[RMDB]
Conditions: 150 mM KOAc, 10 mM MgCl2 and 150 mM bicine (pH 8.5), 24 C. An RNA of 207 nucleotides, treated with DMS and 2A3 and read out base by base. High DMS reactivity at an A or C suggests that its Watson-Crick edge is free. The 2A3 profile rests on 1,632 reads. Values cover nucleotides 27 to 156.
RNA sequence: GGGAACGACUCGAGUAGAGUCGAAAAAACUUGACCCCUGGCAUAUUACCUGGCACAUAGGGGGAACUCUUUCAAUAUUUUCUGAGCUUACCUGCUAGGCUUAGUAUCAUCUGCAGGAUAGAAAUAGUAUCUCACGCAUCUCCAUAUUUGGCAUGAAUAAUAUUACCGUGUUCGCACGGUAAUAUUAAAAAGAAACAACAACAACAAC
Reactivity to DMS in 0.01 (KOAc 150mM, MgCl2 10mM, bicine 150mM(pH8.5), 24C), signal-to-noise 2, nucleotides 027 to 156: a110a040c020u000u000g000a200c000c000c000c030u020g020g000c070a120u000a120u000u010a090c070c010u000g040g020c040a090c070a160u000a150g000g050g010g050g010a050a090c050u000c030u000u000u000c030a070a100u010a050u000u000u010u000c050u020g000a080g060c040u000u000a070c020c020u010g000c070u010a050g040g010c060u000u010a050g040u000a080u000c060a080u010c060u000g000c020a090g000g010a190u000a070g020a070a080a080u010a070g010u000a090u010c020u000c030a050c030g030c080a090u000c040u000c010c020a120u000a120u010u000u010g020g020c100a150u000g030a080a090
Reactivity to 2A3 in 0.01 (KOAc 150mM, MgCl2 10mM, bicine 150mM(pH8.5), 24C), signal-to-noise 3, nucleotides 027 to 156: a000a020c030u020u060g050a040c000c020c000c000u010g020g020c010a020u040a120u230u120a070c010c020u010g070g020c050a060c010a140u200a060g000g000g000g000g000a010a020c010u020c000u020u160u060c110a200a120u050a190u110u100u050u070c050u040g010a010g000c020u040u020a100c020c020u040g030c060u040a000g040g010c000u050u030a020g000u100a070u170c030a020u010c040u060g000c030a020g010g030a020u020a020g080a000a060a000u050a030g020u010a040u050c020u020c030a030c040g060c030a080u030c050u000c060c030a020u040a120u140u110u040g020g010c000a030u090g060a050a050
Notes
The DMS profile rests on 3,991 reads. For 2A3 the reverse transcriptase was SuperScript II with manganese.